This 207-nucleotide RNA was probed chemically with 2A3. The data come from the RNA Mapping Database (RMDB), library OK3TST. For 2A3, 519 sequencing reads were counted.
RNA sequence: GGGAACGACUCGAGUAGAGUCGAAAAGUGAUCGCCGAACAAUUCGUCUUUGUUGAUCUUGACGAAUAAAUCCCAAGCGUCUUGGCCGAAGAUGUAGUCACGAACAACCGUACCGCUAGCAGACUUGUCAUUAACCAGUUGCUUGCCUAAGCGUAAGACAUGUGCUUUCGUUCGCGAAAGCACAUGUAAAAGAAACAACAACAACAAC
Reactivity to 2A3 in 0.01 (KOAc 150mM, MgCl2 10mM, bicine 150mM(pH8.5), 24C), signal-to-noise 1, nucleotides 027 to 156: g120u100g110a190u090c010g000c020c020g030a080a010c030a060a010u000u010c020g040u040c040u050u050u110g130u220u300g130a200u100c020u140u090g000a010c010g010a000a030u110a050a210a000u000c000c000c010a020a010g050c050g000u050c020u020u020g010g070c060c060g080a050a020g000a020u040g040u040a000g070u050c060a000c100g070a150a000c140a040a040c070c000g030u070a060c010c010g050c050u010a020g000c030a030g080a150c030u040u040g000u030c030a180u000u210a040a010c040c000a000g000u030u000g030c040u030u060g010c000c010u080a120a090g030c010g120u040a020a000g110